RNA sequence: GGGAACGACUCGAGUAGAGUCGAAAAGUGAUCAGGAUGCCGAUGGCUUCAACGCGCAAGUGCGCAUUGAAGCAGUCGAACUGGUUGGCGCGGAAAGCUAUAUUCAUGCCGCGCUCAGCGACGGCAACGGGGCUAUAGCAUUCGUGCUAUAGCCCCGAAAAGAAACAACAACAACAAC
Reactivity to DMS in 0.01 (KOAc 150mM, MgCl2 10mM, bicine 150mM(pH8.5), 24C), signal-to-noise 2, nucleotides 027 to 126: g020u000g010a010u000c050a050g000g000a080u000g030c190c010g040a040u000g010g070c000u000u000c010a000a000c080g000c000g040c010a300a170g030u000g030c000g020c000a030u000u020g000a010a000g050c020a010g000u010c000g030a180a040c020u000g010g000u000u000g010g030c070g020c000g000g030a070a050a150g010c130u030a070u000a180u020u010c160a160u020g000c000c000g010c000g020c010u010c060a150g040c050g000a090c040g000g000c120a080a190
Reactivity to 2A3 in 0.01 (KOAc 150mM, MgCl2 10mM, bicine 150mM(pH8.5), 24C), signal-to-noise 2, nucleotides 027 to 126: g090u020g010a000u000c000a000g000g050a040u050g040c020c000g010a020u040g040g030c000u020u000c010a020a000c020g030c010g000c030a270a300g240u170g300c000g010c000a000u000u010g000a000a000g000c010a000g000u000c010g000a010a000c000u000g010g080u020u060g060g020c020g000c010g040g030a090a110a010g020c060u090a080u010a020u300u160c130a050u160g000c010c010g030c000g010c010u030c030a020g010c010g250a300c000g030g000c000a020a080
Structure probing data (DMS and 2A3) for a 177-nucleotide construct. The reactions ran in a buffer of 150 mM KOAc, 10 mM MgCl2 and 150 mM bicine (pH 8.5), at 24 C. Reactivities are given for positions 27 through 126. The DMS profile rests on 1,063 reads.